[RMDB]
RNA sequence: GGGAACGACUCGAGUAGAGUCGAAAAAACUUUCAAAAGCACAGAUGCCAGAGAAGAGGGGUCUGCUGGUGGAUCGUUUUCUGCGCUUUGGCGCGGUGUCCUCGUGUAGUGCGCAGGUGAAAGCACCAAAUCAUUUUGACUUCGGUCAAAAUGAUUUAAAAGAAACAACAACAACAAC
Reactivity to DMS in 0.01 (KOAc 150mM, MgCl2 10mM, bicine 150mM(pH8.5), 24C), signal-to-noise 1, nucleotides 027 to 126: a050a060c080u010u010u010c030a060a050a110a110g020c040a040c080a030g010a110u010g020c000c020a060g030a140g000a100a070g000a110g000g010g000g020u000c020u020g020c060u000g000g040u010g010g020a040u000c070g010u000u020u000u000c010u010g020c110g010c010u000u020u010g010g030c010g040c030g010g000u000g010u000c020c060u000c040g030u010g000u010a090g020u000g020c010g000c020a050g010g010u000g000a080a050a060g020c080a120c060c100
This 177-nucleotide RNA was probed chemically with DMS. Conditions: 150 mM KOAc, 10 mM MgCl2 and 150 mM bicine (pH 8.5), 24 C. For DMS the reverse transcriptase was MarathonRT. The data come from the RNA Mapping Database (RMDB), library OK2TST.